RNA sequence: GGGAACGACUCGAGUAGAGUCGAAAAGCAUCCGACAUGGUGCUGGGAUGCGAAUAUCAGCACAAGGCUUUUGCCGAAUUACACCAGAAGAACGCAUGGCUGGUGUAUCAUCCAUGCAUCGUCUCUUAGAGUCGACGAGACGUAAGAUGUCGACAGAGCGGUAAAUAUAUUUCGAUAUAUUUACCGCAAAAGAAACAACAACAACAAC
Reactivity to 2A3 in 0.01 (KOAc 150mM, MgCl2 10mM, bicine 150mM(pH8.5), 24C), signal-to-noise 7, nucleotides 027 to 156: g020c010a030u030c020c040g070a100c090a100u130g020g000u020g010c010u040g030g030g010a020u050g010c040g020a020a050u130a040u140c030a010g030c020a020c050a120a080g010g000c060u120u120u230u300g020c010c010g020a040a030u130u070a040c010a010c020c010a000g030a060a020g070a170a060c080g040c160a060u080g130g000c010u010g000g000u050g030u020a060u040c010a010u020c030c000a010u060g010c010a040u040c020g010u010c000u000c010u070u110a070g010a040g110u030c020g010a020c040g010a010g010a020c010g000u000a010a050g050a050u130g010u020c010g010a030c030a030g080a010
Reactivity to DMS in 0.01 (KOAc 150mM, MgCl2 10mM, bicine 150mM(pH8.5), 24C), signal-to-noise 4, nucleotides 027 to 156: g000c020a030u010c020c000g020a100c040a110u000g020g040u000g020c000u010g010g030g000a070u000g000c130g010a140a120u000a120u000c020a040g000c020a060c030a100a100g000g000c030u000u000u020u000g030c000c020g000a080a130u010u010a100c050a070c050c000a060g010a110a070g010a060a060c090g010c060a080u000g010g000c070u010g020g000u000g020u000a020u020c040a070u000c020c010a070u000g030c020a130u000c030g010u000c000u010c020u000u020a130g000a190g010u000c020g000a070c070g000a100g010a070c060g010u010a070a090g010a130u000g000u010c000g010a100c050a130g000a260